[RMDB]
RNA sequence: GGGAACGACUCGAGUAGAGUCGAAAAUAUGGGUAAAACUGUAUCGUGGGUUCAAAUCCCACUCUCUCCGCCAGAAACAAUGAAAGUAAUUAAAUAUGGUUGUAAUUUUGCUGUACUAGAUGGGGAGGUAGCGGUGCCCUGUAACCUGCAAUCCGCACGCGUAUUUAUGAUUCGUCAUAAAUACGCGAAAAGAAACAACAACAACAAC
Reactivity to DMS in 0.01 (KOAc 150mM, MgCl2 10mM, bicine 150mM(pH8.5), 24C), signal-to-noise 2, nucleotides 027 to 156: u010a100u000g000g000g040u000a020a080a110a150c030u020g000u000a080u020c080g030u000g010g020g030u000u000c260a040a300a170u010c010c000c000a050c040u000c030u000c000u000c020c010g060c050c030a140g000a230a130a070c050a030a100u000g010a080a150a130g010u000a040a080u000u000a030a150a140u000a140u010g000g010u000u000g010u010a080a130u000u000u000u000g000c040u000g020u000a050c040u000a090g000a100u010g010g000g020g010a020g030g000u010a060g030c030g000g030u000g030c010c010c010u000g000u000a040a040c040c000u000g000c080a110a190u000c030c000g000c130a240
Reactivity to 2A3 in 0.01 (KOAc 150mM, MgCl2 10mM, bicine 150mM(pH8.5), 24C), signal-to-noise 3, nucleotides 027 to 156: u160a040u030g030g060g030u070a060a050a040a050c030u070g040u100a100u120c060g000u000g000g000g030u000u060c030a030a060a070u060c010c000c000a000c000u000c000u000c000u010c000c000g020c000c000a050g040a090a130a010c050a080a040u130g080a210a070a020g070u100a000a170u160u110a100a230a080u160a140u100g060g020u030u040g020u050a080a220u020u090u060u080g030c010u020g030u050a050c040u050a090g080a160u090g030g000g000g000a000g010g000u040a020g020c000g010g010u060g000c000c000c010u010g060u040a030a030c000c020u020g000c010a000a030u020c000c000g030c020a020